[RMDB]
RNA sequence: GGGAACGACUCGAGUAGAGUCGAAAAGAUAUGGAUCAGAACUACCCUUGAAGAGGCGUUGAAAUCGGAAACGAUGGAGCCUUGGAGGAGGGCUGAUCCUAAGUCAAAAUCAGCCUUCGGGCUGAAAGUAAGAGAUAUACUUCGGUAUAUCUCUUACAAAAGAAACAACAACAACAAC
Reactivity to 2A3 in 0.01 (KOAc 150mM, MgCl2 10mM, bicine 150mM(pH8.5), 24C), signal-to-noise 8, nucleotides 027 to 126: g010a000u040a020u130g000g000a000u010c010a000g020a060a050c050u300a300c130c010c000u030u030g010a040a020g010a000g020g010c060g140u300u140g080a190a220a010u010c010g010g000a040a030a020c000g000a010u020g030g060a040g010c010c000u000u000g020g020a040g090g090a010g000g010g000c000u010g000a000u000c010c000u000a080a010g000u000c010a010a020a010a300u030c000a000g010c010c000u080u160c260g130g000g000c020u000g000a030a000a000
Reactivity to DMS in 0.01 (KOAc 150mM, MgCl2 10mM, bicine 150mM(pH8.5), 24C), signal-to-noise 9, nucleotides 027 to 126: g010a030u000a300u000g000g010a020u000c000a010g010a040a040c030u010a300c020c000c250u000u000g010a300a160g000a010g000g010c010g000u000u000g000a100a130a030u000c000g010g000a080a070a150c000g010a010u000g000g010a150g010c010c000u000u000g000g000a170g010g000a030g010g010g000c010u000g000a010u000c000c010u000a010a060g000u010c040a080a070a120a120u000c000a000g010c000c000u000u010c190g020g010g020c000u000g000a000a020a120
Conditions: 150 mM KOAc, 10 mM MgCl2 and 150 mM bicine (pH 8.5), 24 C. The record gives the reactivity of an RNA of 177 nucleotides to 2A3 and DMS. DMS adducts were read by reverse transcription with MarathonRT. DMS (dimethyl sulfate) methylates the pairing face of unpaired adenines and cytosines.